[RMDB]
RNA sequence: GGGAACGACUCGAGUAGAGUCGAAAACACGACAGACAUUCUAUCAAGCUCGCUCUAACAACUAUCAUCAAGAAGGACGCUAUCAGUACAAAGAAUCGAGACAGAACCAUCCUUGCAAUCUCUUCUUUGAAAACUGAACUUGGACGCCGUCUGUUCAUGCUUUAAUGCGGUUCGCCGCAUUAAAGCAAAAAGAAACAACAACAACAAC
Reactivity to 2A3 in 0.01 (KOAc 150mM, MgCl2 10mM, bicine 150mM(pH8.5), 24C), signal-to-noise 1, nucleotides 027 to 156: c100a110c070g100a000c040a000g060a010c000a100u080u070c060u110a140u020c060a060a020g030c010u110c190g060c000u120c050u090a190a120c200a070a140c010u060a010u300c020a090u050c010a010a130g000a020a220g140g010a030c110g000c000u050a120u130c000a020g020u020a070c030a010a010a010g060a000a040u180c130g030a000g010a010c020a040g150a070a020c040c160a160u070c010c000u120u110g100c130a110a160u010c000u010c010u040u000c060u030u000u010g000a050a020a000a000c010u010g010a070a000c010u060u010g020g000a010c140g210c190c040g000u000c000u000g000u040u070c020a040

An RNA of 207 nucleotides, treated with 2A3 and read out base by base. The 2A3 profile rests on 321 reads. The reactions ran in a buffer of 150 mM KOAc, 10 mM MgCl2 and 150 mM bicine (pH 8.5), at 24 C. 2A3 adducts were read by reverse transcription with SuperScript II with manganese. Values are in units of 0.01, from 0 to 300, in steps of 10.